[RMDB]
RNA sequence: GGGAACGACUCGAGUAGAGUCGAAAAAAAUAGAGGAAUCCACUUAUCACUAAGUAUCUCAGGCACAGUGGCUCACGCCUGUAAUCCCAGCACUCUGGGAGGCCAAGGCAGGCAGAUCGCCUAAGUGCAGGAGUUUGAGACCAGCCUGGCCAACAUGGAUGGAGGAUGGAUUCGUCCAUCCUCCAUCAAAAGAAACAACAACAACAAC
Reactivity to 2A3 in 0.01 (KOAc 150mM, MgCl2 10mM, bicine 150mM(pH8.5), 24C), signal-to-noise 1, nucleotides 027 to 156: a000a000a030u200a040g020a050g010g040a060a080u100c040c020a060c010u050u110a040u120c050a090c130u120a080a000g050u040a040u060c030u000c080a010g040g030c010a010c000a070g040u020g010g000c040u040c060a010c020g020c010c000u000g040u030a040a070u020c000c000c000a010g000c080a050c140u300c060u020g000g000g000a000g010g010c020c020a050a000g160g010c000a010g040g000c000a000g050a090u080c030g030c000c010u000a170a000g010u020g050c000a000g010g000a040g010u090u120u180g020a080g010a000c020c020a050g110c000c020u080g020g000c080c010a010a010c030a180u200g080

The record gives the reactivity of an RNA of 207 nucleotides to 2A3. The 2A3 profile rests on 575 reads. Values are in units of 0.01, from 0 to 300, in steps of 10. Conditions: 150 mM KOAc, 10 mM MgCl2 and 150 mM bicine (pH 8.5), 24 C.